RNA sequence: GGGAACGACUCGAGUAGAGUCGAAAAGCUCGUCCACUCCGAUCGAGCCACUAGGAGCUAUCGGAACUCUUAGCGGAGUGACCAAAUCAUUCAACUUCAGUUGGACAUCGUGAGAUCGAGGUCCAAAGACGUUUGAUUGGUUCGCCGAUCGAACGUCAAAAGAAACAACAACAACAAC
Reactivity to DMS in 0.01 (KOAc 150mM, MgCl2 10mM, bicine 150mM(pH8.5), 24C), signal-to-noise 8, nucleotides 027 to 126: g030c030u010c040g010u010c050c090a070c030u010c010c040g000a090u020c100g010a070g010c020c040a290c030u010a030g000g000a040g010c060u010a130u030c160g010g030a270a160c020u000c000u000u000a050g010c080g000g000a040g010u000g000a090c050c050a070a070a100u020c090a080u040u010c100a090a090c090u020u010c070a110g020u000u000g000g000a020c030a030u000c010g020u030g010a140g020a100u030c010g000a020g000g010u000c010c010a020a060a080
Reactivity to 2A3 in 0.01 (KOAc 150mM, MgCl2 10mM, bicine 150mM(pH8.5), 24C), signal-to-noise 9, nucleotides 027 to 126: g020c010u020c030g050u050c060c020a040c010u000c010c010g060a130u140c090g060a040g090c020c010a030c010u040a050g030g000a020g020c030u090a100u260c100g070g050a060a040c000u000c000u030u040a030g030c020g030g010a010g010u020g030a060c020c030a040a070a080u160c070a070u150u130c050a060a060c040u110u050c050a100g030u080u030g010g000a000c000a020u010c010g030u060g110a090g010a070u170c000g000a010g000g030u000c000c000a010a010a010
The record gives the reactivity of an RNA of 177 nucleotides to DMS and 2A3.
For 2A3, 121,212 sequencing reads were counted.
Source: RMDB library OK1LIB, as collected in RNAgym.
The reactions ran in a buffer of 150 mM KOAc, 10 mM MgCl2 and 150 mM bicine (pH 8.5), at 24 C.
The DMS profile rests on 23,561 reads.
In probing experiments dimethyl sulfate is read out at A N1 and C N3, which are open when not base-paired.